[RMDB]
RNA sequence: GGGAACGACUCGAGUAGAGUCGAAAAGAUAUGGACGCCGCUUCAAACCUUGUAGACAUGCUCGAUCCAUCGGAAACGAUGGCAGAGAGCAACAGCUACACUGGGUUUGAAGCGGCGUCCUAAGUCAGAAUAGUAUGGUCUUCGGACCAUACUAUUCAAAAGAAACAACAACAACAAC
Reactivity to DMS in 0.01 (KOAc 150mM, MgCl2 10mM, bicine 150mM(pH8.5), 24C), signal-to-noise 2, nucleotides 027 to 126: g000a100u000a300u000g000g000a020c020g060c000c010g020c010u000u000c000a000a010a020c000c000u000u010g010u010a000g010a070c150a280u000g000c000u010c010g010a300u000c010c000a000u000c000g020g010a100a120a300c010g040a010u000g010g030c210a000g010a300g000a000g000c010a010a020c180a200g020c010u000a000c010a060c300u020g010g000g010u000u000u020g010a000a000g010c000g000g010c000g000u000c000c010u010a000a070g010u000c020a230

Structure probing data (DMS) for a 177-nucleotide construct. Conditions: 150 mM KOAc, 10 mM MgCl2 and 150 mM bicine (pH 8.5), 24 C. For DMS, 1,071 sequencing reads were counted.